[RMDB]
RNA sequence: GGGAACGACUCGAGUAGAGUCGAAAAAUUGUGCGGUCUCUGAGAGAGGAGAACCUGUCUGAGAGAGCUUACCGCUUUUCAUAGUGGCUCUCAGAGAGACUCUGAGGCUCCUCUCGUUCCCAACCAACUAACGAAAGAUAUUCGUAUCUUUCGUUAGAAAAGAAACAACAACAACAAC
Reactivity to 2A3 in 0.01 (KOAc 150mM, MgCl2 10mM, bicine 150mM(pH8.5), 24C), signal-to-noise 6, nucleotides 027 to 126: a000u180u140g040u080g050c060g010g060u030c040u020c050u170g040a070g000a010g010a010g110g010a020g010a080a120c020c010u040g100u000c000u010g010a020g000a010g000a020g070c090u120u140a060c010c010g050c090u040u060u060u080c140a130u180a110g020u020g010g020c000u000c000u000c010a000g000a000g000a010g010a030c040u030c100u250g090a070g140g000c000u010c010c010u030c010u000c000g000u000u010c000c000c000a000a010c000c010a020a050
Reactivity to DMS in 0.01 (KOAc 150mM, MgCl2 10mM, bicine 150mM(pH8.5), 24C), signal-to-noise 5, nucleotides 027 to 126: a090u010u000g020u010g010c070g010g000u000c030u000c050u010g020a160g010a070g010a060g010g000a040g010a070a100c070c010u000g010u000c010u000g000a090g000a020g000a170g010c150u000u010a260c030c030g010c020u000u000u010u010c160a090u010a030g010u000g010g010c010u000c000u000c010a020g000a070g000a060g000a050c060u010c110u000g010a100g010g000c010u000c000c010u000c010u000c000g000u000u010c000c000c000a130a110c210c120a060a170
Chemical mapping of a 177-nucleotide RNA with 2A3 and DMS. The DMS profile rests on 6,457 reads. Reactivities are given for positions 27 through 126. It was measured as part of the RMDB library M2PK90. The reactions ran in a buffer of 150 mM KOAc, 10 mM MgCl2 and 150 mM bicine (pH 8.5), at 24 C. DMS adducts were read by reverse transcription with MarathonRT.